The data come from the RNA Mapping Database (RMDB), library OK1LIB. This 177-nucleotide RNA was probed chemically with 2A3. The reactions ran in a buffer of 150 mM KOAc, 10 mM MgCl2 and 150 mM bicine (pH 8.5), at 24 C.
[RMDB]
RNA sequence: GGGAACGACUCGAGUAGAGUCGAAAAGACGUGUCGAAUUAUCCAAGUUGCAGCGGCUGCCCCGGACGUUAGAUACAGCAUGACGUGUCGAAUUAUCCAAGCUGCGGCGGUGGCCUCGGGCGUUAGAGUAUCCGCGGACUUUCGAGUCCGCGGAUACAAAAGAAACAACAACAACAAC
Reactivity to 2A3 in 0.01 (KOAc 150mM, MgCl2 10mM, bicine 150mM(pH8.5), 24C), signal-to-noise 1, nucleotides 027 to 126: g000a000c020g070u140g060u110c000g040a130a240u300u060a010u110c090c040a190a010g070u010u010g000c010a000g000c020g000g000c000u000g000c000c000c000c000g000g000a000c060g080u090u050a000g000a070u110a080c030a010g100c000a110u150g000a060c030g040u050g000u070c000g060a000a030u200u010a220u130c010c010a050a010g160c020u090g060c030g020g000c150g060g000u020g000g080c000c010u000c000g000g080g000c010g110u100u190a140g020a100